[RMDB]
RNA sequence: GGGAACGACUCGAGUAGAGUCGAAAAAUAAUGACACAAUGUAUAUUCCAAUCUUUAGUAAAACCACAUCUCGAAAAAUUAGCAUAUGAAACACAAGCUAACUUACGCGCCUUUAUAGGAAUGGAGUAUAGGCUUAAAAAUUUUAAUCCCGAGAUGUAUACUAAGACGUGUUCGCACGUCUUAGUAUAAAAGAAACAACAACAACAAC
Reactivity to 2A3 in 0.01 (KOAc 150mM, MgCl2 10mM, bicine 150mM(pH8.5), 24C), signal-to-noise 1, nucleotides 027 to 156: a000u140a000a050u140g100a080c060a040c100a170a100u200g060u090a120u020a060u070u080c030c020a080a180u010c060u050u160u100a140g040u120a010a030a030a090c070c050a050c080a050u010c040u040c020g130a170a060a060a060a110u130u100a000g090c060a060u140a020u230g060a060a180a040c120a000c020a150a040g000c000u020a020a010c020u100u110a080c160g010c000g020c010c030u050u250u130a060u180a080g050g000a000a080u100g000g000a040g000u030a060u060a120g000g010c000u140u050a160a100a190a000a050u060u090u140u090a080a150u100c000c000c040g070a010g010a000u000g030u060
An RNA of 207 nucleotides, treated with 2A3 and read out base by base. Conditions: 150 mM KOAc, 10 mM MgCl2 and 150 mM bicine (pH 8.5), 24 C.